[RMDB]
RNA sequence: GGGAACGACUCGAGUAGAGUCGAAAACAGACUAGCGAUACAGAAUGCCUGUCACUCGGCAAGCUGUAAAGUGAAUCCUUAAAUGAGUUGACUAUGAACGUAGAUUUUUAAGUGGCGAUGUGUUUGGACGCGGGUUCGACUCCCGCCGUCUCCAUUGGCUAUUGUAUACGUUCGCGUAUACAAUAGCAAAAGAAACAACAACAACAAC
Reactivity to DMS in 0.01 (KOAc 150mM, MgCl2 10mM, bicine 150mM(pH8.5), 24C), signal-to-noise 2, nucleotides 027 to 156: c070a070g000a060c030u010a300g020c020g030a300u000a100c010a070g020a100a130u000g030c020c010u000g010u000c110a110c110u000c090g000g000c010a040a070g040c000u000g020u000a040a090a300g000u010g000a090a090u010c010c020u010u000a060a110a110u010g030a020g040u000u000g020a100c020u000a100u000g000a080a100c090g000u000a060g020a120u000u000u000u000u000a030a080g020u000g010g010c070g040a060u000g000u010g010u000u000u010g000g010a090c030g000c020g030g000g010u010u000c080g000a300c150u000c010c000c000g040c000c040g030u000c010u010c030c020a270u000u000g010
Reactivity to 2A3 in 0.01 (KOAc 150mM, MgCl2 10mM, bicine 150mM(pH8.5), 24C), signal-to-noise 4, nucleotides 027 to 156: c040a010g110a060c020u050a020g030c010g020a030u030a050c000a000g060a140a060u050g000c000c000u040g020u070c020a020c040u030c040g010g000c030a040a030g040c000u000g000u020a010a050a020g000u050g040a010a050u060c020c020u110u190a050a090a080u130g040a000g070u140u110g050a030c030u070a090u200g040a110a020c070g110u120a060g040a270u050u150u090u080u150a110a050g060u020g050g000c060g010a090u080g020u040g020u080u130u150g030g000a000c010g000c000g030g010g000u030u100c020g010a020c050u010c000c000c000g000c020c030g010u000c010u000c020c010a030u050u130g140